[RMDB]
RNA sequence: GGGAACGACUCGAGUAGAGUCGAAAAGUAUAUUUGCCUAAAUGGACUUGUGUUCAAAUUAUUUCUUCAAUUGUCAUAGAUAAUCCUGUACCAAAUGGGGAAGAAUUAGGAAAUAAUCAUGUUGUCUAAUGGUACUCUGGAUUCAGGGCAGCAACUGCCACAAGGAAGGUUUCGACCUUCCUUGUGGAAAAGAAACAACAACAACAAC
Reactivity to 2A3 in 0.01 (KOAc 150mM, MgCl2 10mM, bicine 150mM(pH8.5), 24C), signal-to-noise 1, nucleotides 027 to 156: g110u070a000u010a030u300u080u210g040c000c000u000a050a090a100u130g020g020a040c030u160u120g020u040g000u090u060c060a050a000a100u080u040a060u020u090u000c040u090u100c020a080a110u100u020g070u060c010a080u110a130g020a030u100a160a040u050c020c020u020g000u070a080c000c000a020a070a210u180g000g020g040g000a000a110g060a090a110u170u130a070g010g070a080a080a040u030a020a060u040c030a020u110g020u070u000g060u110c080u110a150a030u050g020g010u000a000c040u030c220u060g000g020a040u060u040c010a070g000g000g000c010a030g020c040a120a050c010u110g020

The record gives the reactivity of an RNA of 207 nucleotides to 2A3. The RNA was probed in 150 mM KOAc, 10 mM MgCl2 and 150 mM bicine (pH 8.5) at 24 C. The data come from the RNA Mapping Database (RMDB), library OK3TST.